[RMDB]
An RNA of 177 nucleotides, treated with DMS and 2A3 and read out base by base.
RNA sequence: GGGAACGACUCGAGUAGAGUCGAAAAUUAGAUUUUAAGGUUUUUACUGUGAGGGAUGUUUGGGAGAUGUAAGAAAUGUUCUUGCAGUUAAGGGUUAGUUUACAAUCAGCCACAUUCUAGGUAGGGGUACACCCGUCAAAUUCGUUUGACGGGUGUAAAAAGAAACAACAACAACAAC
Reactivity to DMS in 0.01 (KOAc 150mM, MgCl2 10mM, bicine 150mM(pH8.5), 24C), signal-to-noise 3, nucleotides 027 to 126: u000u030a080g000a110u010u040u000u030a040a090g020g020u000u010u020u020u000a060c050u010g010u010g050a130g020g030g000a070u020g010u050u000u020g000g010g010a120g000a100u000g000u000a020a020g000a040a080a120u040g000u030u000c010u000u030g000c060a020g010u010u010a060a070g000g000g000u010u000a060g010u010u010u020a060c170a060a160u010c070a120g000c020c050a070c080a100u010u000c040u010a050g010g010u020a090g010g000g000g010
Reactivity to 2A3 in 0.01 (KOAc 150mM, MgCl2 10mM, bicine 150mM(pH8.5), 24C), signal-to-noise 2, nucleotides 027 to 126: u010u010a080g030a000u050u010u000u210a140a080g090g020u050u010u000u000u130a110c090u000g070u100g070a130g000g020g010a010u040g200u120u070u000g120g040g000a090g020a050u030g020u060a120a060g010a060a130a030u150g040u130u040c010u020u020g020c010a000g000u020u040a020a010g000g020g000u000u030a000g000u000u040u280a030c040a000a100u070c000a020g040c040c020a080c060a160u130u070c000u000a040g010g040u000a000g000g010g040g000
The DMS profile rests on 4,847 reads. The 2A3 profile rests on 819 reads. The RNA was probed in 150 mM KOAc, 10 mM MgCl2 and 150 mM bicine (pH 8.5) at 24 C. 2A3 adducts were read by reverse transcription with SuperScript II with manganese.